[RMDB]
RNA sequence: GGGAACGACUCGAGUAGAGUCGAAAACGGCUGUUCGCAGCCGAAAAGAUAUGGACACCAGGGUCUGCCUUCUUGAUGACCCUGACUCGGAAACGAGUCAGGCAAGAGAAGGAACUACAGACCCGGUGUCCUAAGUCAAAACCCACGUUCGCGUGGGCUGCCAAUUCGUAUUCGUACGAAUUGGCAGAAAAGAAACAACAACAACAAC
Reactivity to 2A3 in 0.01 (KOAc 150mM, MgCl2 10mM, bicine 150mM(pH8.5), 24C), signal-to-noise 2, nucleotides 027 to 156: c010g000g010c010u020g060u150u140c220g020c170a010g000c000c000g020a000a050a000a030g000a000u030a010u050g000g000a010c020a030c020c180a300g060g000g000u000c000u010g000c020c010u050u050c010u240u060g130a300u030g010a090c000c010c000u010g000a000c000u000c000g020g000a000a000a000c000g000a000g010u010c000a000g000g000c030a070a030g010a000g020a010a000g020g050a020a010c070u290a050c040a000g000a000c000c000c000g010g000u000g000u000c000c000u000a000a000g000u000c010a010a040a110a000c030c000c050a000c010g020u080u110c300g000c000g100u020g010g000g000
About this RNA:
Source: RMDB library RNAMAK, as collected in RNAgym. An RNA of 207 nucleotides, treated with 2A3 and read out base by base. The 2A3 profile rests on 1,751 reads. The reactions ran in a buffer of 150 mM KOAc, 10 mM MgCl2 and 150 mM bicine (pH 8.5), at 24 C.